Notes: This 177-nucleotide RNA was probed chemically with 2A3 and DMS. Reactivities are given for positions 27 through 126. For DMS the reverse transcriptase was MarathonRT.
[RMDB]
RNA sequence: GGGAACGACUCGAGUAGAGUCGAAAAGAGAAACCAUUGUGGAAUUGCCUCAGCAGCCAGCUACCCCACUGUGUGAGCUGGUGGACGGUGAUGAGGAAGGACUUGACUGGGGAUGGCGCAUGCAUGGUCCUAAGUAAUGGUUCGCCAUUACUUAGGAAAAAGAAACAACAACAACAAC
Reactivity to 2A3 in 0.01 (KOAc 150mM, MgCl2 10mM, bicine 150mM(pH8.5), 24C), signal-to-noise 6, nucleotides 027 to 126: g070a010g030a040a060a010c040c020a080u090u130g060u080g050g090a140a150u110u100g040c000c010u050c040a070g020c010a010g020c020c000a000g010c020u150a240c000c010c030c030a160c150u160g050u040g020u040g150a040g020c020u020g020g020u020g030g020a030c050g000g060u080g030a100u080g020a020g050g030a050a050g030g010a020c030u080u100g030a050c030u050g000g010g000g010a040u050g030g000c040g000c040a020u060g000c010a040u100g090g010
Reactivity to DMS in 0.01 (KOAc 150mM, MgCl2 10mM, bicine 150mM(pH8.5), 24C), signal-to-noise 9, nucleotides 027 to 126: g010a130g010a120a110a150c040c020a100u010u000g020u010g010g010a100a100u000u000g010c020c010u000c030a050g020c070a300g010c010c010a020g010c020u000a120c030c020c040c090a090c150u010g010u010g020u010g010a060g010c030u000g010g010u000g000g010a070c110g000g000u000g010a080u000g000a060g000g010a080a070g010g000a080c060u000u000g000a070c060u000g010g000g000g000a080u000g010g010c060g010c060a050u000g010c060a070u010g010g010